RNA sequence: GGGAACGACUCGAGUAGAGUCGAAAAUGAAACGAAGUCUCGCUCUGUUGCUCAGGCUGGAGUGCAGUGGCAUGAUCUCUGCUCAUGGCAACCCCCGCCUCCUGGGUUCAAAUGAUUCCCCUGCCUCAGCCUCCUGAGUAGCUGGGAUUACAUGCAAAUGAUUAGGGAUGUUCGCAUCCCUAAUCAUAAAAGAAACAACAACAACAAC
Reactivity to 2A3 in 0.01 (KOAc 150mM, MgCl2 10mM, bicine 150mM(pH8.5), 24C), signal-to-noise 1, nucleotides 027 to 156: u060g020a060a000a050c060g060a100a030g040u000c020u000c040g020c060u030c030u020g040u050u050g000c020u020c030a030g000g030c040u080g040g090a070g020u300g040c020a000g000u060g080g020c080a050u070g000a030u080c080u010c020u100g020c000u000c020a090u080g010g030c060a130a250c050c040c000c000c020g010c010c000u130c040c040u020g040g010g070u070u060c050a020a070a170u170g020a030u110u080c010c000c000c000u030g000c000c000u040c010a060g000c020c020u010c020c000u000g000a000g010u010a010g000c010u000g000g050g010a030u090u150a170c130a110u210g170c050a080a190
Reactivity to DMS in 0.01 (KOAc 150mM, MgCl2 10mM, bicine 150mM(pH8.5), 24C), signal-to-noise 1, nucleotides 027 to 156: u010g010a090a130a120c060g020a090a080g050u000c020u000c030g050c040u010c050u010g010u000u000g000c030u000c020a030g000g020c110u000g000g010a120g000u000g030c010a060g020u000g070g020c300a100u000g010a060u000c010u000c060u000g000c070u010c000a070u020g010g000c040a040a180c040c020c040c010c070g000c080c000u000c060c030u000g030g010g030u000u000c040a050a060a130u000g020a100u010u010c010c010c020c040u000g020c030c020u000c030a010g000c040c010u010c050c060u070g010a110g010u000a060g000c010u000g010g000g000a060u020u000a070c000a110u020g000c040a070a160
Description:
An RNA of 207 nucleotides, treated with 2A3 and DMS and read out base by base. High 2A3 reactivity points to a flexible backbone, as in loops and unpaired stretches. The DMS profile rests on 2,607 reads.